[RMDB]
Structure probing data (2A3 and DMS) for a 177-nucleotide construct.
For 2A3 the reverse transcriptase was SuperScript II with manganese.
Source: RMDB library M2PK50, as collected in RNAgym.

RNA sequence: GGGAACGACUCGAGUAGAGUCGAAAAAAGGACUGGUUCGCCAGUCCUUAUUGAUUCGUACGCAACGAAGCGUAAGUCAUUACGCAAAUGACUAAAAGCGUAUACGAAAGGACUUCGGUCCUUUCAACAUUUGCGUAAGUUUCGACUUACGCAAAUGAAAAGAAACAACAACAACAAC
Reactivity to 2A3 in 0.01 (KOAc 150mM, MgCl2 10mM, bicine 150mM(pH8.5), 24C), signal-to-noise 3, nucleotides 027 to 126: a000a000g020g000a010c000u000g000g020u040u040c100g040c070c000a000g000u000c000c000u000u000a000u000u050g010a000u020u000c030g000u010a020c020g000c060a110a020c090g100a110a050g020c010g020u010a020a020g040u060c060a110u010u040a020c010g000c030a020a050a040u120g050a050c050u120a010a060a060a040g020c030g020u040a060u030a070c100g020a000a000a000g000g000a010c020u040u090c250g050g000u020c000c010u000u000u000c000a000a010
Reactivity to DMS in 0.01 (KOAc 150mM, MgCl2 10mM, bicine 150mM(pH8.5), 24C), signal-to-noise 7, nucleotides 027 to 126: a030a010g010g010a010c000u000g000g010u000u010c240g030c000c000a000g010u000c000c000u000u000a010u010u000g010a230u010u000c070g010u000a020c030g000c020a120a100c110g010a070a140g000c010g000u000a010a010g000u000c090a070u000u000a010c050g010c030a020a030a030u000g000a110c140u000a050a050a080a160g010c010g000u000a060u010a080c190g000a010a000a010g000g000a020c000u010u010c180g030g010u000c000c000u000u000u000c010a100a190